[RMDB]
RNA sequence: GGGAACGACUCGAGUAGAGUCGAAAAGCUCUGUAAUGGGAUGGGAACCGAAGCCCCAUUGAGGGAUAAUACAGGCUCUCCCAUCCAACUCCUAUUCCAACACGUCCUCGUCGUACAGAGUGGUAACUAAGGUAUAGCUCCUUCGGGAGCUAUACAAGAGAUAUACAAAGUUCGCUUUGUAUAUCUCAAAAGAAACAACAACAACAAC
Reactivity to 2A3 in 0.01 (KOAc 150mM, MgCl2 10mM, bicine 150mM(pH8.5), 24C), signal-to-noise 3, nucleotides 027 to 156: g000c000u000c000u010g040u080a170a140u130g090g010g000a000u000g000g000g020a200a130c010c000g050a110a040g010c000c010c010c010a130u130u220g050a300g020g010g010a040u060a170a060u160a190c110a040g000g000c020u000c000u000c000c000c020a000u010c010c000a000a000c000u020c000c010u050a100u090u040c040c000a080a030c030a010c130g060u040c010c020u060c030g110u030c000g000u020a020c010a000g000a010g020u040g030g020u060a100a100c070u030a190a000g070g000u000a000u000a000g000c000u000c000c000u020u030c060g060g000g010a010g000c000u000a000u000a000c000a000a000
Reactivity to DMS in 0.01 (KOAc 150mM, MgCl2 10mM, bicine 150mM(pH8.5), 24C), signal-to-noise 3, nucleotides 027 to 156: g010c030u010c010u000g020u020a040a110u010g020g020g020a050u000g000g000g050a130a120c010c020g020a230a290g010c010c000c010c000a300u000u000g030a170g020g020g000a080u000a090a110u000a080c120a300g000g010c040u010c090u000c000c010c010a080u000c020c000a090a030c060u020c030c010u000a090u000u000c030c030a110a140c070a080c050g000u000c020c010u000c050g020u010c050g020u000a070c020a060g000a050g000u010g020g000u000a050a160c060u000a080a100g010g010u000a010u010a000g000c000u000c040c000u000u010c300g050g050g010a000g020c000u000a000u010a000c010a040a120
Chemical mapping of a 207-nucleotide RNA with 2A3 and DMS. The RNA was probed in 150 mM KOAc, 10 mM MgCl2 and 150 mM bicine (pH 8.5) at 24 C. It was measured as part of the RMDB library M2RFPK. Reactivities are given for positions 27 through 156. DMS adducts were read by reverse transcription with MarathonRT.